[RMDB]
RNA sequence: GGGAACGACUCGAGUAGAGUCGAAAAGAGGUUAAGUGGGCACGAUGUGUCAAAAUUUGUAAACUUAAAACCCUUUGACCAGGUACAGUGGCUCACACCUGUACUCCCAGCACUUUGGGAGGCCAAGGCCACUAGAAUUUUUCGAAAUUCUAGUGGCAAAAGAAACAACAACAACAAC
Reactivity to 2A3 in 0.01 (KOAc 150mM, MgCl2 10mM, bicine 150mM(pH8.5), 24C), signal-to-noise 2, nucleotides 027 to 126: g070a010g040g000u080u090a100a010g000u010g010g010g020c000a000c030g050a040u090g150u010g000u040c000a010a050a120a190u130u160u150g170u190a110a090a100c050u060u120a020a050a090a150c000c020c000u010u000u030g020a020c020c010a010g040g030u140a110c050a110g050u100g160g020c000u000c020a010c010a000c010c000u010g030u050a040c000u010c000c000c000a010g080c090a060c130u210u260u030g000g000g000a000g020g000c000c000a020a020g140
Reactivity to DMS in 0.01 (KOAc 150mM, MgCl2 10mM, bicine 150mM(pH8.5), 24C), signal-to-noise 4, nucleotides 027 to 126: g000a060g010g010u000u010a010a070g040u000g000g010g020c010a030c010g010a230u000g010u010g010u000c020a010a020a060a180u010u000u010g010u010a080a100a120c140u000u020a040a050a100a090c090c270c090u000u000u000g000a050c010c030a050g000g020u010a050c170a150g010u000g000g010c020u000c040a030c020a040c030c020u000g000u000a080c010u000c000c000c000a040g010c300a080c230u000u010u000g010g000g010a040g010g000c050c040a060a080g020